An RNA of 207 nucleotides, treated with DMS and read out base by base.
RNA sequence: GGGAACGACUCGAGUAGAGUCGAAAAUCCUACUUUCGAGUAGGAACAUGUCCUAAGUCGUGUGAGGAGACGGACAUGAAGUGUGUCGGAAACGACACCUUCAACAGCCGUCUCUCCCCACCACACGAUAUGGAAGCUCUGCGGCUUCGGCCGCAAACGACUUAUAAGGUUUCGACCUUAUAAGUCGAAAAGAAACAACAACAACAAC
Reactivity to DMS in 0.01 (KOAc 150mM, MgCl2 10mM, bicine 150mM(pH8.5), 24C), signal-to-noise 1, nucleotides 027 to 156: u000c010c000u030a010c000u000u000u000c240g010a080g030u010a000g010g010a010a090c040a070u000g030u010c000c040u010a090a300g000u000c030g080u010g000u000g000a300g030g030a040g000a040c000g010g030a120c080a300u000g000a030a070g030u010g010u000g000u000c000g000g000a210a090a270c000g010a000c000a000c000c000u000u000c000a030a050c130a190g070c000c000g000u000c030u000c000u000c150c130c030c040a300c250c000a030c000a040c040g010a070u000a240u030g090g000a100a160g000c090u000c000u000g050c010g110g010c000u000u010c300g000g030c080c010g000c000a000a000a190

Reactivities are given for positions 27 through 156.
The reactions ran in a buffer of 150 mM KOAc, 10 mM MgCl2 and 150 mM bicine (pH 8.5), at 24 C.
Reactivities are rounded to 0.1 and cut off at 0 and 3.
DMS adducts were read by reverse transcription with MarathonRT.